The record gives the reactivity of an RNA of 177 nucleotides to DMS and 2A3. Values cover nucleotides 27 to 126. The RNA was probed in 150 mM KOAc, 10 mM MgCl2 and 150 mM bicine (pH 8.5) at 24 C.
[RMDB]
RNA sequence: GGGAACGACUCGAGUAGAGUCGAAAAGAUAUGGAUCCACUAUGGGAGAUCUCAGGGUCGGAAACGACCUAGAGAUCGACGAUCAUACAUGUGGAUCCUAAGUCAAAACGGGAAGUUCGCUUCCCGACGUGAUGAUACAGUUCGCUGUAUCAUCACGAAAAGAAACAACAACAACAAC
Reactivity to DMS in 0.01 (KOAc 150mM, MgCl2 10mM, bicine 150mM(pH8.5), 24C), signal-to-noise 5, nucleotides 027 to 126: g000a040u000a300u000g000g000a020u000c000c000a010c040u010a020u010g000g030g000a070g010a010u000c000u010c000a300g000g020g010u010c000g030g000a040a050a140c000g010a010c000c000u000a070g020a010g010a010u000c000g010a070c300g000a040u010c080a030u010a070c300a090u000g010u000g000g000a000u000c000c000u000a020a060g010u000c010a100a020a130a260c090g030g010g000a020a010g000u000u010c210g030c010u000u000c000c000c000g030a030
Reactivity to 2A3 in 0.01 (KOAc 150mM, MgCl2 10mM, bicine 150mM(pH8.5), 24C), signal-to-noise 3, nucleotides 027 to 126: g030a010u040a030u120g000g000a000u000c000c010a010c050u120a030u040g050g000g000a100g000a010u010c010u010c130a140g090g000g010u040c000g000g010a040a020a030c000g000a010c010c010u010a030g010a000g000a000u010c000g010a030c030g020a040u140c040a020u030a180c160a140u220g000u030g000g010a000u000c000c000u000a010a000g050u010c030a000a000a090a130c010g010g010g020a020a010g020u110u210c300g100c180u000u020c000c000c000g000a030